The record gives the reactivity of an RNA of 207 nucleotides to 2A3.
The RNA was probed in 150 mM KOAc, 10 mM MgCl2 and 150 mM bicine (pH 8.5) at 24 C.
Values cover nucleotides 27 to 156.

RNA sequence: GGGAACGACUCGAGUAGAGUCGAAAACUGCCCAGUGCACUUUUAGUUACGGCCUGUGUGGGCUAAGCGAGUGUAAACGGCGGGAGUAACUAUGACUCUCUUAAGGUAGCCAAAUGCCUCGUCAUGUAAUUAGUGACGCGCAUGAAUGGAGCAACGAGCGGUUAGGUAAGUUCGCUUACCUAACCGCAAAAGAAACAACAACAACAAC
Reactivity to 2A3 in 0.01 (KOAc 150mM, MgCl2 10mM, bicine 150mM(pH8.5), 24C), signal-to-noise 1, nucleotides 027 to 156: c030u060g000c010c010c050a020g000u000g010c020a000c020u020u010u000u100a050g020u020u040a080c210g000g000c000c000u230g050u150g100u300g130g050g000c000u000a000a050g040c000g000a000g000u000g020u050a090a200a000c040g000g000c000g000g030g000a030g080u000a050a130c150u190a100u280g060a100c000u050c000u030c000u040u030a150a010g080g000u000a050g040c010c000a080a150a000u030g050c070c130u130c060g050u000c000a000u080g030u120a290a120u230u120a100g010u000g000a000c040g000c000g040c000a000u040g000a060a110u020g000g010a090g110c020a000a120c020g000a050